[RMDB]
This 177-nucleotide RNA was probed chemically with DMS and 2A3. Reactivities are given for positions 27 through 126. The reactions ran in a buffer of 150 mM KOAc, 10 mM MgCl2 and 150 mM bicine (pH 8.5), at 24 C. It was measured as part of the RMDB library OK1LIB.

RNA sequence: GGGAACGACUCGAGUAGAGUCGAAAAGGAAUCCAGGGGCAUGGUGAAAGGCAACAACAGCAGCAGCUUCAAUGGCAACAAUGGCAGAACAAAUGGCGCCUCGGAUAACGGAAACGGAAGUUGCAAACCUAAUACUGCAUUUCGAUGCAGUAUUAGGAAAAGAAACAACAACAACAAC
Reactivity to DMS in 0.01 (KOAc 150mM, MgCl2 10mM, bicine 150mM(pH8.5), 24C), signal-to-noise 5, nucleotides 027 to 126: g010g000a150a050u010c050c020a060g000g000g020g030c060a060u010g020g000u010g020a080a080a070g000g000c050a040a080c100a060a080c150a080g000c060a070g020c030a030g000c050u010u000c060a070a070u050g010g000c050a040a080c100a070a090u030g000g000c020a040g010a100a070c120a040a090a130u040g000g010c110g000c010c020u010c040g000g010a070u020a090a120c060g000g000a040a060a090c170g000g000a020a070g010u000u000g020c030a100a060a100
Reactivity to 2A3 in 0.01 (KOAc 150mM, MgCl2 10mM, bicine 150mM(pH8.5), 24C), signal-to-noise 7, nucleotides 027 to 126: g070g020a050a040u050c040c040a060g030g000g000g020c060a050u090g050g010u070g070a150a080a050g070g020c020a050a040c020a030a020c010a070g070c020a010g010c010a020g010c010u050u040c050a080a170u110g050g000c010a040a020c020a060a150u090g070g000c020a020g040a110a040c040a060a110a030u100g080g000c010g020c010c010u020c010g010g000a010u050a080a020c050g030g030a030a060a000c050g040g020a060a030g010u040u030g010c000a030a020a020